[RMDB]
RNA sequence: GGGAACGACUCGAGUAGAGUCGAAAAGAUCGCGUCGGCGGCCGGCACGCUGUCGUCGAUCAUCUUCGUGUUACCGGCACUGCUCAUGAUCGGCUGGUGGAGCGGGUUUCCGUACUGGACAACGGCGUGAGGCAGAUACUUUCGAGUAUCUGCCUCAAAAAGAAACAACAACAACAAC
Reactivity to 2A3 in 0.01 (KOAc 150mM, MgCl2 10mM, bicine 150mM(pH8.5), 24C), signal-to-noise 1, nucleotides 027 to 126: g000a020u050c060g000c000g030u030c000g040g010c000g020g000c000c010g120g010c100a010c050g060c020u030g030u040c040g070u060c030g040a000u010c000a020u040c010u090u070c050g070u080g040u100u100a040c050c000g050g000c000a020c090u020g020c010u040c080a040u110g010a090u060c010g020g000c000u030g010g030u040g010g000a070g020c000g000g040g000u020u040u030c020c010g040u070a080c090u050g060g070a050c040a090a000c060g000g020c010g070
Reactivity to DMS in 0.01 (KOAc 150mM, MgCl2 10mM, bicine 150mM(pH8.5), 24C), signal-to-noise 2, nucleotides 027 to 126: g010a060u000c050g050c060g030u010c020g010g000c070g020g000c030c080g020g000c070a130c040g000c030u000g010u010c040g020u010c030g010a000u000c000a080u000c070u000u000c080g020u010g010u000u000a130c080c080g010g010c070a070c040u010g000c030u000c080a110u010g030a060u000c050g000g000c050u000g030g000u000g000g000a100g030c050g010g000g030u000u010u000c010c010g020u000a090c080u000g000g020a040c100a060a100c010g000g040c090g000

Background
Structure probing data (2A3 and DMS) for a 177-nucleotide construct. Conditions: 150 mM KOAc, 10 mM MgCl2 and 150 mM bicine (pH 8.5), 24 C. For 2A3 the reverse transcriptase was SuperScript II with manganese.